Background
The record gives the reactivity of an RNA of 207 nucleotides to 2A3. 2A3 adducts were read by reverse transcription with SuperScript II with manganese.
RNA sequence: GGGAACGACUCGAGUAGAGUCGAAAAAUGGAUGAUGGCUUUUAAAAUAUUCCUAAUGUCGGCUACCUUAAGACUCCAAGCUGGGCAAACAAACGUAAUUUAUUUCCAGAAGAAAGGGGAUAUUGAGAUGUUUAAGUUUAUGAACUGCCGUCCCCAAGCAGUAAAAUGCAUUCGUGCAUUUUACUGCAAAAGAAACAACAACAACAAC
Reactivity to 2A3 in 0.01 (KOAc 150mM, MgCl2 10mM, bicine 150mM(pH8.5), 24C), signal-to-noise 1, nucleotides 027 to 156: a000u040g040g030a020u050g010a010u030g040g000c050u070u050u300u290a090a060a030a010u130a100u070u120c040c010u090a110a030u090g050u070c040g020g000c020u040a030c000c000u080u080a070a090g040a100c000u010c060c020a040a050g000c030u040g020g020g050c070a020a070a140c000a020a210a020c060g030u040a050a000u000u060u120a060u010u020u080c010c040a060g090a180a070g020a040a190a030g000g000g000g010a010u030a040u010u190g050a060g040a030u070g070u060u050u160a080a160g020u000u000u250a140u120g030a080a020c000u050g040c020c000g030u020c000c080c000c010a020a010